[RMDB]
RNA sequence: GGGAACGACUCGAGUAGAGUCGAAAAAGAAAAUAAGCAUGAACAAAUACAGCUAAAGAAGUUGAAAUACCAAGGAAAAACCAUGGUUCGGACAAAAGUACAUGCACCGAGACCCAAAGGGAAAAAAUCCAUCUUACAAGUUCGCUUGUAAGAUGGAAAAAGAAACAACAACAACAAC
Reactivity to DMS in 0.01 (KOAc 150mM, MgCl2 10mM, bicine 150mM(pH8.5), 24C), signal-to-noise 1, nucleotides 027 to 126: a080g000a130a040a100a040u000a120a190g000c020a060u000g000a020a020c050a080a080a270u020a160c110a000g020c080u000a000a120a130g030a120a050g010u000u010g000a110a040a060u020a080c000c040a030a030g000g000a100a100a080a180a070c020c000a050u000g050g000u000u000c150g000g000a120c220a030a040a000a070g040u000a030c090a050u010g020c000a120c020c050g000a120g000a020c050c010c030a020a020a220g000g000g020a000a020a090a050a020a120
The record gives the reactivity of an RNA of 177 nucleotides to DMS. Values cover nucleotides 27 to 126. Source: RMDB library M2PK90, as collected in RNAgym. DMS (dimethyl sulfate) methylates the pairing face of unpaired adenines and cytosines. The reactions ran in a buffer of 150 mM KOAc, 10 mM MgCl2 and 150 mM bicine (pH 8.5), at 24 C.